Chemical mapping of a 207-nucleotide RNA with 2A3 and DMS. For 2A3 the reverse transcriptase was SuperScript II with manganese. For DMS, 2,760 sequencing reads were counted. The 2A3 profile rests on 3,229 reads. DMS adducts were read by reverse transcription with MarathonRT. Values cover nucleotides 27 to 156.

RNA sequence: GGGAACGACUCGAGUAGAGUCGAAAAUGAAGCAAAUCCAUAAUUGCCAAUGAUGAGCAAUUCGCUAUUGCCGCCUAAAAACGGUUAGCCGGGGCUGCUAGAGCCUUGUUACCAAAGCUAGCCGGCGUUACGGCAUGAUGGUUCGCCAUCAUGCCAAGCUUGUAAAGACUUUCGAGUCUUUACAAGCAAAAGAAACAACAACAACAAC
Reactivity to 2A3 in 0.01 (KOAc 150mM, MgCl2 10mM, bicine 150mM(pH8.5), 24C), signal-to-noise 4, nucleotides 027 to 156: u120g030a030a010g030c020a030a040a080u120c060c020a040u100a160a040u080u010g010c010c010a090a100u220g100a110u090g010a130g000c010a000a020u060u050c050g000c080u080a090u080u100g030c020c020g030c010c010u090a100a070a030a020a010c020g010g000u010u010a010g000c000c000g000g000g000g000c000u050g040c100u130a050g050a010g230c010c000u010u020g050u070u070a070c050c040a120a050a000g000c000u000a010g000c000c000g010g000c010g030u070u130a050c080g000g000c010a000u000g000a000u000g000g040u040u050c120g040c070c000a000u000c010a000u000g000c000c000a000a000
Reactivity to DMS in 0.01 (KOAc 150mM, MgCl2 10mM, bicine 150mM(pH8.5), 24C), signal-to-noise 2, nucleotides 027 to 156: u000g010a220a130g000c030a080a170a180u010c030c050a130u000a040a040u000u000g040c020c000a150a190u000g000a180u020g000a140g030c000a010a000u000u000c100g030c030u000a060u000u000g010c000c020g000c030c040u010a050a080a110a110a060c030g000g020u000u000a060g040c000c000g000g000g010g030c000u010g050c070u000a130g000a030g000c000c000u000u000g010u000u000a250c240c080a080a100a050g030c000u000a040g030c010c000g020g030c050g000u000u000a110c140g010g000c000a010u000g050a020u010g010g020u000u000c300g020c000c000a010u000c000a020u000g010c020c020a000a060